RNA sequence: GGGAACGACUCGAGUAGAGUCGAAAAGAAACGCAAGGCCGCUGACCGACGGGAUAUUGUGGGGCUUACCACAGGGGACGCGGCGUUAUCACUUCCCUUUUAAGCCGACCGUCUGGGCUGCAUACAAACCACCCAACUAUCUUCGGAUAGUUGGGAAGUACGGAAUACAGUUCGCUGUAUUCCGUACAAAAGAAACAACAACAACAAC
Reactivity to DMS in 0.01 (KOAc 150mM, MgCl2 10mM, bicine 150mM(pH8.5), 24C), signal-to-noise 2, nucleotides 027 to 156: g030a090a090a050c030g050c050a020a150g020g020c020c000g030c010u010g030a110c030c000g020a110c030g010g020g040a160u000a090u000u020g030u000g000g010g010g000c130u010u000a060c020c000a010c060a140g010g040g010g010a180c080g000c000g020g000c070g050u010u010a090u010c050a080c090u010u000c000c010c000u000u000u000u000a050a110g010c030c020g000a090c010c010g010u000c000u000g000g020g030c050u000g010c030a110u000a140c060a080a090a080c060c050a200c000c000c010a000a000c000u000a000u010c000u000u010c300g040g010a000u000a000g030u000u000g000g010g000a000a020
Reactivity to 2A3 in 0.01 (KOAc 150mM, MgCl2 10mM, bicine 150mM(pH8.5), 24C), signal-to-noise 2, nucleotides 027 to 156: g010a030a030a000c080g020c060a100a080g110g000c010c010g020c050u060g070a060c020c020g040a020c050g030g050g090a110u110a120u270u060g010u030g030g090g030g100c080u050u090a050c000c010a030c010a010g000g020g000g040a010c020g020c020g030g000c000g030u030u020a010u010c020a010c050u000u020c000c000c000u010u020u070u060a040a010g000c000c000g040a080c000c000g030u030c010u050g000g040g040c010u040g010c030a060u150a100c040a010a100a000c050c010a030c000c010c000a000a000c010u000a000u000c000u020u020c080g080g000a010u000a000g000u010u010g000g000g000a010a000
Overview:
Chemical mapping of a 207-nucleotide RNA with DMS and 2A3. For 2A3, 1,539 sequencing reads were counted. It was measured as part of the RMDB library M2RFPK. In probing experiments dimethyl sulfate is read out at A N1 and C N3, which are open when not base-paired.